[RMDB]
RNA sequence: GGGAACGACUCGAGUAGAGUCGAAAACAGUGUUUUUAUCCUCUCAGCCAAGCCUGGUACCAAUUUAUCGACCCCUGAGAGAUGAAAUGCUUGGUGAGCACUAGGGCGGAUUCGAAUCUCUGAUCGACGCAGUGGACGGAUUCGUCCGUCCACUGCGAAAAGAAACAACAACAACAAC
Reactivity to 2A3 in 0.01 (KOAc 150mM, MgCl2 10mM, bicine 150mM(pH8.5), 24C), signal-to-noise 1, nucleotides 027 to 126: c020a050g030u000g000u050u080u020u070u080a100u060c010c000u000c020u020c020a000g010c000c130a090a030g000c000c040u040g050g000u060a230c000c130a140a260u180u160u070a220u160c070g000a160c000c000c000c000u000g010a020g020a000g000a020u060g030a000a040a000u100g000c020u040u070g070g100u080g050a010g030c000a030c000u000a090g020g040g010c050g020g000a050u080u020c080g000a160a000u000c000u000c000u050g130a150u080c030g000a020